Source: RMDB library M2RFPK, as collected in RNAgym. Chemical mapping of a 207-nucleotide RNA with DMS and 2A3. 2A3 adducts were read by reverse transcription with SuperScript II with manganese. Reactivities are given for positions 27 through 156. The reactions ran in a buffer of 150 mM KOAc, 10 mM MgCl2 and 150 mM bicine (pH 8.5), at 24 C. DMS adducts were read by reverse transcription with MarathonRT.
RNA sequence: GGGAACGACUCGAGUAGAGUCGAAAACUCAACUGACAUACAAGGGGAGGUUUCGGGCAAAUGUUGUAUGCAGAAAGCGUGAGGAAGGUAGCACUUAGACACUCACGAGUAGCGGUUCGGCAGUAGUAAAGGUCCUGGCGCUUCGGCGCCAGGACAACAUCUAGAUAAAGUUCGCUUUAUCUAGAUGAAAAGAAACAACAACAACAAC
Reactivity to DMS in 0.01 (KOAc 150mM, MgCl2 10mM, bicine 150mM(pH8.5), 24C), signal-to-noise 1, nucleotides 027 to 156: c050u000c030a080a140c070u000g060a100c060a110u010a080c070a140a110g000g000g160g010a110g010g030u000u010u000c060g000g010g000c080a030a060a160u020g050u010u000g010u000a120u000g000c030a080g000a070a090a120g000c040g030u000g030a030g020g010a050a010g010g040u000a110g020c030a160c060u010u000a050g010a120c050a120c050u000c030a030c020g010a080g030u010a050g040c040g010g000u010u000c030g020g030c000a090g000u000a110g000u000a030a110a130g010g020u000c000c000u000g060g000c100g150c010u000u010c290g060g030c060g000c010c010a010g000g010a000c000a030a100
Reactivity to 2A3 in 0.01 (KOAc 150mM, MgCl2 10mM, bicine 150mM(pH8.5), 24C), signal-to-noise 1, nucleotides 027 to 156: c010u010c030a010a050c040u140g040a030c000a070u220a020c060a130a070g000g020g020g030a000g010g050u000u080u120c040g020g000g020c040a060a060a060u110g020u070u040g020u010a040u040g040c010a010g130a070a060a000g020c040g010u010g020a000g080g040a060a040g030g000u060a010g020c010a000c080u090u040a010g030a050c080a000c050u040c010a010c040g010a010g010u020a010g010c040g060g000u030u010c030g010g010c040a020g020u130a000g010u060a120a130a030g080g010u000c000c020u020g030g060c020g000c010u030u070c090g070g000c000g000c000c010a000g000g000a000c000a000a010